[RMDB]
RNA sequence: GGGAACGACUCGAGUAGAGUCGAAAAGCGGUCAUCGCGCCGAUCGCCACCCGGCUGGUGCCGCCCAGUCACGCCGGGCGCGCCACGACGUCGAUCUACAUCGGAACCAGUCUGGCGCUGGUCGUCGUCUUCACAGCGUGUUCGCACGCUGUGAAGAAAAAGAAACAACAACAACAAC
Reactivity to 2A3 in 0.01 (KOAc 150mM, MgCl2 10mM, bicine 150mM(pH8.5), 24C), signal-to-noise 3, nucleotides 027 to 126: g030c030g020g020u050c030a020u110c080g000c010g040c040c000g020a020u050c010g010c000c030a090c010c010c010g010g010c020u040g020g040u030g050c030c020g020c000c000c000a050g030u100c050a000c110g050c020c040g030g020g000c010g000c000g000c010c000a060c060g010a000c000g040u070c030g010a030u020c040u210a110c040a130u030c030g030g030a040a060c020c010a020g050u020c020u110g000g020c030g010c030u010g030g010u030c030g020u020c010g000
Reactivity to DMS in 0.01 (KOAc 150mM, MgCl2 10mM, bicine 150mM(pH8.5), 24C), signal-to-noise 2, nucleotides 027 to 126: g000c000g000g010u040c030a160u000c050g000c060g020c030c030g000a040u000c000g010c000c130a170c020c010c000g000g010c020u000g000g060u000g010c120c070g000c030c000c020a030g000u000c090a170c110g000c060c040g000g030g080c110g010c010g020c160c040a090c110g010a060c080g000u060c000g010a000u000c150u040a090c160a140u000c020g000g010a140a050c060c080a200g000u000c130u010g020g000c050g050c040u030g000g030u000c010g000u020c060g040
An RNA of 177 nucleotides, treated with 2A3 and DMS and read out base by base. The DMS profile rests on 1,651 reads. For 2A3 the reverse transcriptase was SuperScript II with manganese. It was measured as part of the RMDB library OK1LIB. For 2A3, 1,964 sequencing reads were counted.